RNA sequence: GGGAACGACUCGAGUAGAGUCGAAAAAUACAAGGGGAGGUCUCGGCCAAAUGUUGUAUGCAGAAAGCGUGAGGAAGGUAGCACUUAGACACUCACGAGUAGCGGUUCGGCAGUAGUGCUAAAAUGAGACAGUACGAAAAGUUCGCUUUUCGUACAACUUCAGAGACUAGUUCGCUAGUCUCUGAAGAAAAGAAACAACAACAACAAC
Reactivity to DMS in 0.01 (KOAc 150mM, MgCl2 10mM, bicine 150mM(pH8.5), 24C), signal-to-noise 3, nucleotides 027 to 156: a090u000a100c050a090a090g000g010g010g040a090g000g030u000c030u010c040g060g000c000c020a040a080a090u000g020u000u000g030u000a090u010g020c040a120g020a050a080a120g010c050g010u010g010a040g000g020a110a070g010g040u000a100g010c040a080c030u000u000a130g010a120c050a120c020u000c010a090c050g000a140g030u000a070g030c030g010g000u000u000c050g020g000c020a100g010u000a050g020u000g010c030u000a030a030a070a100u010g000a130g020a080c030a140g000u000a020c020g000a000a020a020a020g000u010u010c300g010c000u000u000u000u000c000g050u010a010c010a030a090
Reactivity to 2A3 in 0.01 (KOAc 150mM, MgCl2 10mM, bicine 150mM(pH8.5), 24C), signal-to-noise 4, nucleotides 027 to 156: a010u140a020c070a060a060g010g000g010g000a020g000g040u020c020u030c060g030g050c010c000a060a090a060u100g010u040u020g020u040a060u050g040c020a040g110a110a080a010g030c020g010u030g020a010g040g030a090a010g050g000u080a010g030c010a010c030u080u020a030g040a080c030a020c060u010c000a010c050g010a020g050u070a030g000c070g020g030u100u080c050g020g000c030a030g050u110a000g010u030g020c020u060a010a040a040a080u090g000a010g000a050c070a050g010u000a000c000g000a000a010a000a010g010u030u090c170g030c120u010u000u000u000c000g000u000a000c000a000a010
Source information: Structure probing data (DMS and 2A3) for a 207-nucleotide construct. For DMS, 7,078 sequencing reads were counted. Values cover nucleotides 27 to 156. Conditions: 150 mM KOAc, 10 mM MgCl2 and 150 mM bicine (pH 8.5), 24 C. 2A3 adducts were read by reverse transcription with SuperScript II with manganese.